[RMDB]
RNA sequence: GGGAACGACUCGAGUAGAGUCGAAAAUAAGCCAAAGGGAUGUCCCGACCGGAGGCCGACAAUCCAGGGAACCGGAUGUCAUCACGUUGUUGCAGUACCAGAUGGCAUCUUAAAUCCGAUCUGCAACAAAAGUCUUACACCUUCGGGUGUAAGACAAGUGAGGACUAUUCUUCGGAAUAGUCCUCACAAAAGAAACAACAACAACAAC
Reactivity to 2A3 in 0.01 (KOAc 150mM, MgCl2 10mM, bicine 150mM(pH8.5), 24C), signal-to-noise 1, nucleotides 027 to 156: u070a000a010g010c000c000a000a000a030g030g000g000a010u040g010u000c030c000c000g020a010c000c020g010g000a000g030g010c010c000g030a040c050a160a140u140c180c110a070g020g000g000a000a000c000c000g030g000a000u000g030u030c000a000u000c000a010c130g110u150u090g000u030u000g030c000a000g000u100a050c030c030a020g020a020u000g000g000c010a000u000c000u000u040a030a040a040u160c100c000g000a060u020c000u020g000c000a000a000c000a000a100a000a000g000u010c000u000u000a010c010a000c000c000u040u120c290g080g010g000u000g030u000a000a000g000a000c000a000a000